[RMDB]
RNA sequence: GGGAACGACUCGAGUAGAGUCGAAAACAGGCGCGUCCGAAGUAUGGGAAGCAUAAGUGGACACACCGCCUUCCGCUCGCAGCAUUGUAUCUCGAAUACUUUCUCGGUGCGGGGAGCCUAGGCGCGGUCUACUCUGGGGGUUCGCUCCUAGGGUAGAAAAAGAAACAACAACAACAAC
Reactivity to 2A3 in 0.01 (KOAc 150mM, MgCl2 10mM, bicine 150mM(pH8.5), 24C), signal-to-noise 9, nucleotides 027 to 126: c040a000g030g000c000g000c010g020u000c000c010g020a080a000g030u040a020u070g020g010g060a050a010g060c010a020u020a060a020g050u040g020g010a010c010a000c000a010c030c010g000c000c000u040u010c000c000g000c000u000c010g020c040a010g000c010a020u000u000g000u000a010u000c050u030c070g050a150a000u010a010c000u000u010u010c020u000c010g010g000u090g000c000g000g000g010g020a010g010c000c010u020a020g010g000c020g000c000g010g010
Reactivity to DMS in 0.01 (KOAc 150mM, MgCl2 10mM, bicine 150mM(pH8.5), 24C), signal-to-noise 9, nucleotides 027 to 126: c080a100g010g020c020g010c080g010u010c010c020g010a110a140g010u010a040u000g000g010g010a110a120g020c040a050u020a050a070g010u020g000g010a080c120a110c080a090c170c040g000c030c020u000u010c020c030g010c000u000c020g000c160a040g000c130a030u000u000g010u000a020u000c030u050c190g000a120a030u010a020c020u000u000u000c030u000c040g000g000u020g000c010g000g000g010g000a070g000c020c030u010a120g000g010c030g010c050g000g000